The record gives the reactivity of an RNA of 207 nucleotides to DMS. Reactivities are given for positions 27 through 156. Conditions: 150 mM KOAc, 10 mM MgCl2 and 150 mM bicine (pH 8.5), 24 C.
[RMDB]
RNA sequence: GGGAACGACUCGAGUAGAGUCGAAAAUUGAUUGAUUACUUACUUAUUAUGUGUUGUGCAUUGUGGAAAGCACUUUACAUGGCCUAAUUUAUUUCCACAACCACCCUAGGAGGUUGUUACUGCAUUUGUGCAGUAAGUCAUUGGACUUUUAGAAGUACUCCCACUAUUUAUUCGUAAAUAGUGGGAGAAAAGAAACAACAACAACAAC
Reactivity to DMS in 0.01 (KOAc 150mM, MgCl2 10mM, bicine 150mM(pH8.5), 24C), signal-to-noise 2, nucleotides 027 to 156: u010u000g000a130u010u010g010a170u010u010a090c050u010u010a110c080u000u010a070u000u000a020u010g000u000g010u010u010g010u010g010c020a050u000u000g030u000g010g000a090a080a140g000c030a030c010u000u010u010a040c060a040u000g010g010c070c020u000a060a090u000u000u010a110u030u000u000c000c020a110c000a030a060c050c030a070c040c010c020u000a120g040g020a170g010g010u000u010g010u000u000a040c000u000g010c000a080u000u000u000g010u000g040c000a010g020u000a010a050g000u000c030a250u020u010g030g010a080c060u000u000u020u000a150g020a070a130g010u010a170